[RMDB]
Conditions: 150 mM KOAc, 10 mM MgCl2 and 150 mM bicine (pH 8.5), 24 C. Chemical mapping of a 177-nucleotide RNA with DMS. Source: RMDB library 15KREP, as collected in RNAgym.
RNA sequence: GGGAACGACUCGAGUAGAGUCGAAAAAGAUCACAUUAUUAUGUGGAUUCCGUUACAGUUAAAGAGACUGUUGUUCAGUUUAAUUAUCGUAGAGACGGUCAACCAUUCUACGAGCGGUUUCCCCUCUAUGCAGAGAAAUGUUCGCAUUUCUCUGCAUAAAAGAAACAACAACAACAAC
Reactivity to DMS in 0.01 (KOAc 150mM, MgCl2 10mM, bicine 150mM(pH8.5), 24C), signal-to-noise 1, nucleotides 027 to 126: a060g010a040u020c000a040c000a010u000u010a160u000u010a030u010g020u000g030g000a170u000u010c010c030g020u000u000a060c250a140g000u010u000a000a060a070g000a210g000a040c030u010g000u010u000g020u000u000c030a090g000u000u000u000a050a070u010u000a060u000c000g000u010a020g000a130g020a050c220g010g010u010c300a140a120c020c000a160u000u000c010u010a000c000g000a030g000c030g000g000u000u010u010c010c000c000c170u000c070u000